The data come from the RNA Mapping Database (RMDB), library OK1LIB.
Structure probing data (2A3) for a 177-nucleotide construct.
The reactions ran in a buffer of 150 mM KOAc, 10 mM MgCl2 and 150 mM bicine (pH 8.5), at 24 C.
Values are in units of 0.01, from 0 to 300, in steps of 10.
The 2A3 profile rests on 408 reads.

[RMDB]
RNA sequence: GGGAACGACUCGAGUAGAGUCGAAAAGGAACCGCGCGAGCAUACCGCCAUUGGGGUUCAUUUCAUUGCCGACAAGCACGAAAUUGAGGUCGCUCGCCGAAGGUGCGGCCCCGCCCAUCGCCGUGAAUGAGCCUAGGCUUUUCGAAGCCUAGGCUCAAAAAGAAACAACAACAACAAC
Reactivity to 2A3 in 0.01 (KOAc 150mM, MgCl2 10mM, bicine 150mM(pH8.5), 24C), signal-to-noise 1, nucleotides 027 to 126: g150g000a000a050c000c040g040c000g000c040g000a030g000c030a100u060a220c030c030g140c000c000a160u250u300g140g000g000g070u010u000c000a000u000u060u000c070a110u050u040g000c000c020g110a140c100a150a000g000c090a050c120g090a030a000a000u080u160g010a030g010g010u130c130g000c020u000c030g150c000c000g080a040a050g080g000u100g000c060g000g030c010c000c010c010g000c000c000c000a010u050c020g010c060c000g040u000g170a000a090